Annotation: The record gives the reactivity of an RNA of 177 nucleotides to DMS and 2A3. 2A3 adducts were read by reverse transcription with SuperScript II with manganese. It was measured as part of the RMDB library OK2TST. The RNA was probed in 150 mM KOAc, 10 mM MgCl2 and 150 mM bicine (pH 8.5) at 24 C.
[RMDB]
RNA sequence: GGGAACGACUCGAGUAGAGUCGAAAACUACCCCUCCAAGGAAUGGGGUUAUACGAUGGGCUUCUCGCAAUAUUAUUCCUCGGCGGGCUAUGCCCAGUAUGAGCGCCAUUUCGUAACCUGGGCCGAACAGGUACGUCCUGUUCGCAGGACGUACCUGAAAAGAAACAACAACAACAAC
Reactivity to DMS in 0.01 (KOAc 150mM, MgCl2 10mM, bicine 150mM(pH8.5), 24C), signal-to-noise 2, nucleotides 027 to 126: c070u010a260c080c000c020c000u010c030c070a090a190g020g010a060a010u000g010g000g020g040u000u000a020u000a040c000g010a170u000g030g010g020c030u000u000c010u000c000g020c000a050a080u000a140u000u010a170u010u000c090c090u000c170g000g020c010g000g010g000c300u000a020u010g010c000c000c000a080g000u000a010u000g000a010g020c050g000c030c020a030u000u000u000c020g030u020a030a090c160c050u000g030g000g020c110c100g000a060a180
Reactivity to 2A3 in 0.01 (KOAc 150mM, MgCl2 10mM, bicine 150mM(pH8.5), 24C), signal-to-noise 2, nucleotides 027 to 126: c000u070a070c000c010c010c000u060c040c010a090a050g000g000a020a020u030g000g010g000g000u010u000a040u000a000c090g130a180u080g000g020g010c000u020u000c000u030c000g000c020a070a030u070a130u300u120a130u240u190c020c050u050c060g090g030c000g020g030g000c060u060a060u220g000c000c000c000a000g010u000a020u030g230a010g020c080g100c000c000a000u040u040u000c010g010u040a030a040c040c040u030g010g050g000c050c010g020a090a030